[RMDB]
RNA sequence: GGGAACGACUCGAGUAGAGUCGAAAAGGUACGGAUGUCGGACGGUGACAAACGUGUGCUACACGGCCUCCCCUCGGGGUGGAAGUGGACCGCUCUGCUAGGGGCUCUCAUCAAUGUGACACAACUUUUAACCAUGGCGGAAUUGUCCAACACUCUGCCCCGUUAUAUGUUUCGACAUAUAACGGGGAAAAGAAACAACAACAACAAC
Reactivity to 2A3 in 0.01 (KOAc 150mM, MgCl2 10mM, bicine 150mM(pH8.5), 24C), signal-to-noise 2, nucleotides 027 to 156: g040g000u050a030c020g020g040a070u030g070u090c030g050g050a070c040g010g050u070g040a060c110a050a100a040c020g030u080g070u060g140c010u070a040c020a010c050g070g000c050c000u000c010c010c000c010u060c020g010g010g000g000u000g010g010a160a070g060u030g000g040a020c010c000g000c040u030c000u020g060c070u060a030g000g050g000g000c000u000c000u010c000a150u090c040a090a130u130g010u020g090a000c060a020c020a120a150c020u060u120u080u190a050a030c040c010a040u090g050g020c030g010g030a080a070u060u110g030u030c000c000a080a020c040a010c040u040c000u050g010
An RNA of 207 nucleotides, treated with 2A3 and read out base by base. The reactions ran in a buffer of 150 mM KOAc, 10 mM MgCl2 and 150 mM bicine (pH 8.5), at 24 C. Reactivities are given for positions 27 through 156.